[RMDB]
The record gives the reactivity of an RNA of 177 nucleotides to 2A3.
RNA sequence: GGGAACGACUCGAGUAGAGUCGAAAAAGUCAGUGCGGCGGCCAUUGGGAGCUCACUGCUGGACUGCGGCCCGUAGCCGUAGGCCUUGUCCAUGUCCAUGGCGUAUUUGUGCUUCUGCUCGCCGCUCCGGGGUAGCUAGCUUCGGCUAGCUACCCCGAAAAGAAACAACAACAACAAC
Reactivity to 2A3 in 0.01 (KOAc 150mM, MgCl2 10mM, bicine 150mM(pH8.5), 24C), signal-to-noise 1, nucleotides 027 to 126: a010g150u150c090a000g060u000g110c040g000g000c000g010g050c040c070a140u240u300g000g000g000a000g000c010u000c000a000c020u050g130c020u070g010g030a040c000u000g000c010g000g010c000c050c000g040u020a000g010c000c000g000u000a040g010g000c000c000u000u040g090u000c010c010a050u090g090u030c130c200a090u090g110g000c070g000u090a080u040u090u140g040u040g010c000u000u050c010u110g020c030u050c030g010c000c000g050c030u000c010
Source information
The 2A3 profile rests on 545 reads.